[RMDB]
RNA sequence: GGGAACGACUCGAGUAGAGUCGAAAACAUGUCGAAGGGGUUAAUUUGGCAACACUUGUUCUUGGUCAGGUCUCCUCCACUGUCACGGCAGCGACCAAGUGUGACAGUAUGACUUUAACCCCGGGCAGACUAGCUUUUAGUUCGCUAAAAGCUAGUCAAAAGAAACAACAACAACAAC
Reactivity to DMS in 0.01 (KOAc 150mM, MgCl2 10mM, bicine 150mM(pH8.5), 24C), signal-to-noise 4, nucleotides 027 to 126: c070a160u000g020u000c010g030a100a140g010g020g010g010u000u000a000a030u000u010u000g010g020c030a090a090c100a030c040u000u010g020u010u000c010u000u000g010g000u010c020a130g000g000u010c060u010c040c030u000c060c080a130c070u000g010u000c050a070c160g020g010c060a050g000c140g000a040c050c010a010a040g010u030g040u000g010a020c030a040g020u000a080u000g000a060c030u000u010u000a010a030c020c000c000c010g010g000g000c040a070
Reactivity to 2A3 in 0.01 (KOAc 150mM, MgCl2 10mM, bicine 150mM(pH8.5), 24C), signal-to-noise 2, nucleotides 027 to 126: c010a040u110g020u040c050g160a300a110g000g000g020g010u000u060a010a010u100u090u150g050g000c030a100a040c030a030c070u070u160g040u140u050c000u030u080g050g020u020c040a070g100g140u080c010u100c060c030u010c000c030a050c040u070g010u040c030a000c060g070g020c030a060g060c000g050a020c030c010a070a020g100u140g030u040g080a000c010a010g000u020a110u040g020a040c000u020u000u050a020a030c090c000c000c000g000g000g020c000a000